[RMDB]
RNA sequence: GGGAACGACUCGAGUAGAGUCGAAAAACGCAUCUACGGAUGCGAAUUGCUCACUCUUUCUCAAGGGCUUCUAGCAUUGCCAGUAACAAAAUGGCAAGCUCGAAGUCUUUGGGGAGAGUGGACAAAAUCCGACUCUCACUUUCGAGUGAGAGUCGGAAAAAGAAACAACAACAACAAC
Reactivity to 2A3 in 0.01 (KOAc 150mM, MgCl2 10mM, bicine 150mM(pH8.5), 24C), signal-to-noise 1, nucleotides 027 to 126: a000c020g000c000a000u000c000u020a040c280g080g000a000u000g000c000g000a020a110u040u010g000c060u000c000a000c000u020c000u030u190u040c010u020c040a010a000g000g010g060c000u000u000c000u000a020g000c090a300u000u000g000c070c070a000g080u180a200a140c040a270a070a110a090u020g000g000c000a000a000g010c000u000c000g000a000a000g000u000c010u000u000u000g000g000g010g000a000g000a000g000u000g000g000a000c000a000a090a000a020

The record gives the reactivity of an RNA of 177 nucleotides to 2A3. For 2A3, 561 sequencing reads were counted.